This 177-nucleotide RNA was probed chemically with 2A3 and DMS.
For DMS the reverse transcriptase was MarathonRT.

RNA sequence: GGGAACGACUCGAGUAGAGUCGAAAAGUGAUUGAUGAUGGUUUUGCUGAGAGUAUGGAUUUUUCGAGAAUGGAGGUUAUCUCCACUUUACUGGCCGAUAAUUUAUCGCAGUAUGAUUGAUUACCUGUCUUUCCACGUCAUUCGUGACGUGGAAAGAAAAAGAAACAACAACAACAAC
Reactivity to 2A3 in 0.01 (KOAc 150mM, MgCl2 10mM, bicine 150mM(pH8.5), 24C), signal-to-noise 1, nucleotides 027 to 126: g080u050g050a180u060u020g000a000u030g010a000u030g110g000u000u160u140u050g060c110u030g040a010g000a050g060u120a070u070g040g030a070u030u050u040u010u040c030g030a060g100a220a040u080g000g050a030g000g020u120u080a090u170c030u010c000c000a070c000u000u000u000a010c000u010g130g000c090c020g010a020u040a120a130u120u170u010a030u050c010g040c030a000g020u050a030u000g160a070u040u030g000a040u040u030a020c000c020u020g100
Reactivity to DMS in 0.01 (KOAc 150mM, MgCl2 10mM, bicine 150mM(pH8.5), 24C), signal-to-noise 1, nucleotides 027 to 126: g020u020g010a080u000u010g010a050u020g000a100u020g010g010u010u010u010u010g040c060u000g000a080g010a110g040u010a060u010g010g010a080u000u000u010u010u000c060g020a090g010a070a090u000g000g020a030g010g010u020u010a070u010c010u000c020c020a030c140u000u010u000a040c090u000g030g010c180c030g020a030u000a030a080u020u010u000a160u010c030g010c040a030g000u000a020u000g010a070u000u000g000a050u000u000a000c020c020u000g000